Structure probing data (DMS) for a 177-nucleotide construct. The RNA was probed in 150 mM KOAc, 10 mM MgCl2 and 150 mM bicine (pH 8.5) at 24 C. It was measured as part of the RMDB library TTRDEL. For DMS the reverse transcriptase was MarathonRT.
[RMDB]
RNA sequence: GGGAACGACUCGAGUAGAGUCGAAAAGAUAUGGACCUUCUACCCACCGCUGUACACCGUUGAAAUCGGAAACGAUGGAGGUGACAGCGAGGAAGGUCCUAAGUCAAAAGCCCCGUUCGCGGGGCAAGCUAACAAGCAGGUUCGCCUGCUUGUUAGCAAAAGAAACAACAACAACAAC
Reactivity to DMS in 0.01 (KOAc 150mM, MgCl2 10mM, bicine 150mM(pH8.5), 24C), signal-to-noise 1, nucleotides 027 to 126: g000a080u010a290u010g050g020a000c020c000u000u000c000u000a090c070c000c030a300c100c000g000c000u010g020u000a150c000a000c000c000g030u020u000g000a100a030a030u000c000g010g000a120a020a060c000g000a000u000g000g010a130g010g060u000g000a070c020a000g000c000g000a000g020g000a030a040g000g000u000c000c000u000a000a120g000u050c100a110a120a100a110g000c010c000c000c000g000u000u010c160g040c000g000g000g000g050c000a000a020